Conditions: 150 mM KOAc, 10 mM MgCl2 and 150 mM bicine (pH 8.5), 24 C. An RNA of 207 nucleotides, treated with DMS and 2A3 and read out base by base. For DMS, 10,405 sequencing reads were counted. Values are in units of 0.01, from 0 to 300, in steps of 10. It was measured as part of the RMDB library ARCHII.
RNA sequence: GGGAACGACUCGAGUAGAGUCGAAAAGCCUGUCAGUCCGGCACUAGAACACAACAGGCUGGUUCCCGGAUGCGCUUCGCGCACCGUGCUGUUCGGGGACGAGAUCCAACGGUGAGCUAAGCAUGUAGUGCUGGGGAUGGAGUGCCUUCGGACGGCGGAUAAACAGAAUGUUCGCAUUCUGUUUAUCAAAAGAAACAACAACAACAAC
Reactivity to DMS in 0.01 (KOAc 150mM, MgCl2 10mM, bicine 150mM(pH8.5), 24C), signal-to-noise 3, nucleotides 027 to 156: g030c010c000u010g010u000c040a210g000u000c020c020g000g000c090a100c060u000a120g010a060a050c060a070c040a110a030c010a020g000g030c000u000g030g010u000u010c000c010c010g020g010a040u000g010c020g010c040u000u000c170g000c000g020c010a040c000c010g030u000g040c030u000g010u000u000c010g010g010g020g000a060c010g010a220g020a260u010c030c010a060a090c030g000g020u000g020a160g030c040u000a070a090g030c050a120u020g030u000a060g020u000g000c020u000g010g020g020g010a180u000g010g000a170g000u000g020c020c010u000u000c010g020g010a040c030g030g030c020g010
Reactivity to 2A3 in 0.01 (KOAc 150mM, MgCl2 10mM, bicine 150mM(pH8.5), 24C), signal-to-noise 2, nucleotides 027 to 156: g000c010c000u000g010u030c050a080g040u050c050c080g110g000c110a050c120u170a070g100a240a010c050a000c020a130a000c000a010g010g000c000u020g020g030u030u010c010c000c000g000g010a050u020g000c010g000c040u170u150c250g000c000g000c010a000c010c020g100u080g030c010u020g010u020u020c030g020g000g000g000a010c010g000a010g010a040u010c020c020a110a170c070g010g010u100g060a060g010c020u040a060a060g080c080a090u170g080u130a030g040u020g050c010u010g020g000g020g000a000u020g010g010a040g030u180g160c020c000u170u290c010g000g000a000c000g000g000c010g020